[RMDB]
RNA sequence: GGGAACGACUCGAGUAGAGUCGAAAAGAUAUGGAAUCGUCUACGCACAAUGAUGUCGGAAACGAUUGAGUGUAGUAGAGCGAUUCCUAAGUCAAAAGUCUUUGUAAAGUUCGCUUUACAAAGACAACUCUAGACGAGGGUUCGCCCUCGUCUAGAGAAAAGAAACAACAACAACAAC
Reactivity to DMS in 0.01 (KOAc 150mM, MgCl2 10mM, bicine 150mM(pH8.5), 24C), signal-to-noise 1, nucleotides 027 to 126: g000a020u000a300u000g000g000a030a000u000c010g000u000c000u000a020c010g050c010a010c000a210a170u040g000a120u010g000u000c000g000g030a220a080a160c000g000a000u010u000g000a130g000u000g030u010a030g020u000a010g010a020g050c000g010a000u000u000c010c000u020a040a050g000u000c030a080a080a130a210g000u000c000u000u000u000g000u010a010a040a010g020u000u000c170g000c000u000u000u010a000c000a010a000a000g010a000c000a000a090